Background
Chemical mapping of a 177-nucleotide RNA with DMS. DMS adducts were read by reverse transcription with MarathonRT. The reactions ran in a buffer of 150 mM KOAc, 10 mM MgCl2 and 150 mM bicine (pH 8.5), at 24 C.
[RMDB]
RNA sequence: GGGAACGACUCGAGUAGAGUCGAAAAGCAUCUCGCUCUCCUCUCUCUGCUCCCUGCUCACCCUCCCCUCCCAGGCCUCUGCAUCCCUUUCCCUGGUGGAGCCAAACUACCGCAGGGCUCUGAGCACGGCAUAGAACCUAUUCGUAGGUUCUAUGCCAAAAGAAACAACAACAACAAC
Reactivity to DMS in 0.01 (KOAc 150mM, MgCl2 10mM, bicine 150mM(pH8.5), 24C), signal-to-noise 3, nucleotides 027 to 126: g030c040a090u010c020u010c090g000c030u010c030u000c020c020u010c030u000c050u000c060u010g000c060u000c040c010c020u010g000c040u010c070a090c040c040c010u000c000c010c010c010u010c000c010c030a150g000g010c030c030u000c040u000g000c030a100u000c020c010c010u020u000u010c010c000c010u010g020g000u000g000g000a020g000c030c040a040a110a100c120u040a080c070c080g000c060a100g030g000g000c020u010c020u000g020a120g000c080a130c150